The data come from the RNA Mapping Database (RMDB), library OK2TRN. The record gives the reactivity of an RNA of 177 nucleotides to DMS and 2A3. For 2A3, 1,071 sequencing reads were counted.
[RMDB]
RNA sequence: GGGAACGACUCGAGUAGAGUCGAAAAGCUGACGGAUAACGUGGUGUUAUAGAUAUAUAUGUUACGUCAUAAUAAUAUCAUAGCUCGAGAAAUAUAUAUAUCGUAGCUAAAUUUUUAUCGUCAGCGACACUCAUACGCUGUUCGCAGCGUAUGAGUGAAAAGAAACAACAACAACAAC
Reactivity to DMS in 0.01 (KOAc 150mM, MgCl2 10mM, bicine 150mM(pH8.5), 24C), signal-to-noise 1, nucleotides 027 to 126: g010c000u000g020a020c000g010g020a020u000a000a000c300g010u050g000g010u010g010u000u000a000u000a080g000a030u000a050u000a000u010a030u000g000u010u000a010c070g000u010c060a070u010a070a060u040a140a020u000a150u010c090a130u000a090g010c200u000c030g000a160g000a030a010a050u000a020u000a030u000a030u000a000u000c000g010u000a010g020c010u000a110a130a050u010u010u000u000u020a040u040c010g010u000c000a000g030c010g030a130
Reactivity to 2A3 in 0.01 (KOAc 150mM, MgCl2 10mM, bicine 150mM(pH8.5), 24C), signal-to-noise 1, nucleotides 027 to 126: g000c000u010g000a000c030g240g020a020u000a020a000c030g010u020g000g060u030g030u030u030a040u070a230g000a000u010a000u010a020u010a010u040g010u040u030a090c020g000u020c040a000u050a280a020u130a060a110u070a040u110c070a060u100a100g110c030u020c150g090a070g080a060a090a000u000a000u000a000u010a000u000a010u030c000g010u010a010g000c000u030a080a030a020u160u140u010u010u020a030u030c000g000u000c010a010g000c000g010a000